Record summary: An RNA of 207 nucleotides, treated with 2A3 and DMS and read out base by base.

RNA sequence: GGGAACGACUCGAGUAGAGUCGAAAAGUGUAUAGGCAAACCGACCCUCCGCCUAUACACGAAUUAAGGAGGGAGGAGAUCUUAUGCUCGCGAUCUUACGUCACGAGCGACGGCCUGCGGCUCGUGACGUAUCUUACGCAGGCCAUAGCGAGCUACACAGGAUUUAAUACUUCGGUAUUAAAUCCUGAAAAGAAACAACAACAACAAC
Reactivity to 2A3 in 0.01 (KOAc 150mM, MgCl2 10mM, bicine 150mM(pH8.5), 24C), signal-to-noise 2, nucleotides 027 to 156: g000u000g000u010a000u000a020g000g030c040a080a180a180c120c080g150a290c070c000c020u040c080c040g000c000c000u000a010u000a000c000a000c000g010a010a020u160u130a140a080g030g000a040g020g060g000a010g020g050a030g000a010u040c020u130u110a040u220g040c020u010c010g010c000g040a090u050c040u020u130a030c000g000u000c000a010c030g030a010g040c060g040a020c000g000g020c000c030u050g010c000g060g000c000u000c020g000u010g000a000c000g000u010a020u000c000u070u100a030c030g000c000a010g020g000c000c000a000u000a000g000c010g000a000g000c000u080a020c110a010
Reactivity to DMS in 0.01 (KOAc 150mM, MgCl2 10mM, bicine 150mM(pH8.5), 24C), signal-to-noise 1, nucleotides 027 to 156: g020u010g000u000a000u000a000g010g000c040a050a060a110c050c020g030a200c030c060c010u000c060c060g020c010c000u000a070u010a020c000a030c000g000a050a070u010u000a120a050g030g000a010g020g050g020a050g090g020a110g020a070u010c030u010u000a120u000g010c000u000c020g010c010g010a120u000c040u050u010a090c060g020u000c000a000c000g000a080g000c000g000a040c030g020g000c100c030u000g020c000g020g020c010u010c000g030u000g000a020c040g020u000a000u000c050u000u000a050c050g000c000a070g000g010c000c070a160u000a100g000c000g000a020g000c010u010a150c110a210

The reactions ran in a buffer of 150 mM KOAc, 10 mM MgCl2 and 150 mM bicine (pH 8.5), at 24 C. For DMS, 2,834 sequencing reads were counted. For 2A3 the reverse transcriptase was SuperScript II with manganese.